The record gives the reactivity of an RNA of 177 nucleotides to 2A3 and DMS. Values cover nucleotides 27 to 126. For 2A3 the reverse transcriptase was SuperScript II with manganese. For DMS, 4,113 sequencing reads were counted.
[RMDB]
RNA sequence: GGGAACGACUCGAGUAGAGUCGAAAACUGACGGGAACGACGGUUGAACUGACCAUCGUUGAAGAUGAUAAUCCCGCGGUGCGUACGCCGCUGGAAUGGCGUCAGGCCAUUUAUGAAGAGAAACUCGGUCCGCAUAAUCAUUCGUGAUUAUGCGGACAAAAGAAACAACAACAACAAC
Reactivity to 2A3 in 0.01 (KOAc 150mM, MgCl2 10mM, bicine 150mM(pH8.5), 24C), signal-to-noise 4, nucleotides 027 to 126: c000u010g040a040c040g030g040g080a030a000c020g000a000c010g010g030u010u040g070a200a180c190u270g030a020c000c000a000u000c040g020u050u050g030a120a060g090a100u170g030a080u080a180a080u040c000c020c010g000c000g000g000u040g010c140g070u070a070c090g000c000c000g000c050u030g020g010a020a080u040g050g000c020g020u020c040a040g010g190c000c040a070u100u200u110a120u130g090a110a060g050a030g040a060a090a050c020u000c080g020
Reactivity to DMS in 0.01 (KOAc 150mM, MgCl2 10mM, bicine 150mM(pH8.5), 24C), signal-to-noise 3, nucleotides 027 to 126: c000u000g010a060c050g010g010g000a010a010c000g000a010c080g010g010u000u040g020a080a210c200u090g000a000c000c000a090u000c000g020u030u020g040a130a080g000a110u070g000a080u040a080a150u040c010c000c040g000c000g030g030u000g010c300g000u030a160c120g010c000c000g020c000u000g010g000a030a060u000g010g020c000g000u000c090a060g010g000c000c010a050u010u010u020a040u020g000a050a090g000a020g000a050a080a070c110u010c230g020